An RNA of 207 nucleotides, treated with 2A3 and read out base by base. The RNA was probed in 150 mM KOAc, 10 mM MgCl2 and 150 mM bicine (pH 8.5) at 24 C. Reactivities are rounded to 0.1 and cut off at 0 and 3. For 2A3 the reverse transcriptase was SuperScript II with manganese.
[RMDB]
RNA sequence: GGGAACGACUCGAGUAGAGUCGAAAAAAGCAUGCCGGGGAAUGGUGGUUUACCCCGUUAUCAAAUGAUUACCGACCAAUAAUUGGCGAAACUCGUUUGGCGUUGGCUGCCUAAUUCAAGGAAUUAGAAUAGCUCUCCGGGUUCGCCCGGAGAGCAACACUUAGUUGUGGUUCGCCACAACUAAGUGAAAAGAAACAACAACAACAAC
Reactivity to 2A3 in 0.01 (KOAc 150mM, MgCl2 10mM, bicine 150mM(pH8.5), 24C), signal-to-noise 1, nucleotides 027 to 156: a000a020g070c020a040u070g030c000c040g020g000g040g010a030a050u050g030g020u030g010g000u020u040u110a070c000c010c010c000g080u070u050a070u100c010a020a000a070u040g010a000u080u030a020c030c010g100a130c060c040a040a010u240a140a070u110u060g010g010c040g010a030a030a050c050u030c070g060u040u040u070g010g000c000g020u020u060g020g070c030u010g010c000c010u020a040a030u060u040c070a120a040g060g010a080a020u030u030a080g060a100a130u040a120g000c000u000c000u000c000c000g010g010g010u020u070c150g090c060c000c000g000g030a000g000a000g010c000a000a000